[RMDB]
RNA sequence: GGGAACGACUCGAGUAGAGUCGAAAAGAUAUGGAGUGACUACCCACCUUCCAGGUAGCCGACGAUCGCAGUUUAAUCGGAAACGAUUAAACUGCGGGAGGCUACCGAAGAGGUCACUCCUAAGUCAGAAAACAAGAUAGUUCGCUAUCUUGUUUUCAAAAGAAACAACAACAACAAC
Reactivity to 2A3 in 0.01 (KOAc 150mM, MgCl2 10mM, bicine 150mM(pH8.5), 24C), signal-to-noise 1, nucleotides 027 to 126: g080a080u300a260u300g000g010a010g010u010g010a010c010u300a300c060c000c010a010c010c010u020u000c090c050a030g000g000u030a000g000c020c020g130a300c010g010a120u040c010g000c000a020g030u000u000u000a000a000u000c000g040g000a130a080a040c000g000a000u000u000a010a000a000c000u020g000c000g010g010g000a000g000g000c000u000a000c000c000g000a020a000g000a010g000g000u000c000a010c010u040c000c000u010a060a010g020u000c070a050
Reactivity to DMS in 0.01 (KOAc 150mM, MgCl2 10mM, bicine 150mM(pH8.5), 24C), signal-to-noise 3, nucleotides 027 to 126: g000a180u020a200u000g010g000a040g010u000g010a020c010u000a170c040c000c020a300c120c010u000u010c020c110a170g020g000u000a010g010c000c000g000a050c290g020a030u010c000g000c000a020g000u010u000u000a020a010u000c010g010g010a110a140a250c010g010a000u000u000a010a000a010c000u000g020c010g000g000g000a040g010g020c010u000a000c000c000g010a000a010g010a090g000g000u000c000a000c000u000c000c000u000a010a080g010u010c250a130